Annotation: Chemical mapping of a 177-nucleotide RNA with DMS and 2A3.
RNA sequence: GGGAACGACUCGAGUAGAGUCGAAAACCAACGUGGCUACUGUGCCACCUGGUGGAUAGCUCGGCUCGGAUGCCGACGAAGGACGUGCCAAGCUGCGAUAAGCCUGAGGGAGCCGCACGGAGGCUAAGCGAGAAUGUAACUUCGGUUACAUUCUCGCAAAAGAAACAACAACAACAAC
Reactivity to DMS in 0.01 (KOAc 150mM, MgCl2 10mM, bicine 150mM(pH8.5), 24C), signal-to-noise 2, nucleotides 027 to 126: c000c000a060a080c270g030u020g020g010c000u000a070c170u010g070u030g000c000c030a000c040c060u000g000g000u000g000g020a220u000a120g000c030u000c010g000g000c010u030c110g030g010a230u010g020c060c080g020a130c110g000a200a080g020g020a120c010g000u030g050c060c000a050a080g020c070u020g000c040g060a110u000a170a170g000c030c000u010g000a140g020g000g000a110g060c010c040g070c110a020c050g000g000a270g000g000c030u030a010a140
Reactivity to 2A3 in 0.01 (KOAc 150mM, MgCl2 10mM, bicine 150mM(pH8.5), 24C), signal-to-noise 3, nucleotides 027 to 126: c000c000a000a030c060g050u020g000g010c030u060a090c100u290g090u290g050c000c000a010c000c010u020g010g000u020g050g020a100u040a080g050c020u000c050g030g020c030u020c020g140g040a120u170g040c010c000g020a050c050g000a030a020g060g030a020c040g030u050g000c010c000a040a050g000c020u020g000c020g140a140u070a230a030g020c010c030u010g010a080g000g070g040a030g050c060c010g000c040a010c020g020g010a030g000g020c010u020a060a010